Background
The record gives the reactivity of an RNA of 207 nucleotides to 2A3. The RNA was probed in 150 mM KOAc, 10 mM MgCl2 and 150 mM bicine (pH 8.5) at 24 C.
RNA sequence: GGGAACGACUCGAGUAGAGUCGAAAAACUGACGGUACGCCGUCAGAACGGUAGAAAAGAUGGUUUGAAAACCACGCCUUCUACCAAUAUAGUAAAUAGAUAGGCGGAGCGGUCAUACGUGACCGCAAAAACAUCCUUGGCUUCGGCCAAGGAUGAAGAUCGAAGAAAUCUUCGGAUUUCUUCGAUCAAAAGAAACAACAACAACAAC
Reactivity to 2A3 in 0.01 (KOAc 150mM, MgCl2 10mM, bicine 150mM(pH8.5), 24C), signal-to-noise 2, nucleotides 027 to 156: a000c000u000g000a000c000g000g000u040a020c150g070c030c000g000u000c000a000g000a050a010c050g010g010u010a020g010a010a040a000a030g070a300u010g000g070u040u080u170g060a120a120a000a000c000c000a000c000g000c000c010u000u010c000u010a000c000c000a000a000u080a000u020a020g060u040a000a080a090u050a020g070a050u090a050g030g000c010g000g010a010g000c000g010g000u000c000a010u070a160c220g070u060g010a000c000c010g000c000a000a000a000a000a000c000a000u000c000c000u000u000g000g000c000u030u060c160g120g000c000c010a000a000g020g000a000u000g000a000a000
For 2A3, 1,403 sequencing reads were counted. Source: RMDB library M2RFOK, as collected in RNAgym.